Structure probing data (2A3) for a 207-nucleotide construct. 2A3 adducts were read by reverse transcription with SuperScript II with manganese. It was measured as part of the RMDB library M2RFPK. Values cover nucleotides 27 to 156. Conditions: 150 mM KOAc, 10 mM MgCl2 and 150 mM bicine (pH 8.5), 24 C.
RNA sequence: GGGAACGACUCGAGUAGAGUCGAAAAACUAAUCCAAAGCAAGUAUAGGAGAACAGGUUUUUAACUAUUUGUAGGCAGAUAAAAAAUAGUAUUUGACAGUCUAACACUAACUGAACAAUAAGUGUUAAAAAGUCGUCUCUGUUCGCAGAGACGACAACCCAAAGAAAAUCUUCGGAUUUUCUUUGGGAAAAGAAACAACAACAACAAC
Reactivity to 2A3 in 0.01 (KOAc 150mM, MgCl2 10mM, bicine 150mM(pH8.5), 24C), signal-to-noise 1, nucleotides 027 to 156: a000c030u050a050a020u000c000c010a000a030a060g050c040a030a010g050u070a080u110a100g020g030a050g030a060a020c040a100g050g030u060u050u000u020u140a080a040c010u020a040u080u060u090g030u020a020g060g030c060a010g030a230u130a060a100a000a000a020a030u030a020g030u060a080u050u020u080g020a010c000a000g000u010c000u000a000a000c000a000c000u010a030a000c000u010g030a040a010c010a010a010u010a000a000g000u000g000u030u010a000a090a000a020a000g000u000c000g010u010c000u000c000u010g060u060u030c130g010c040a010g010a000g000a000c000g010a000c000a000a000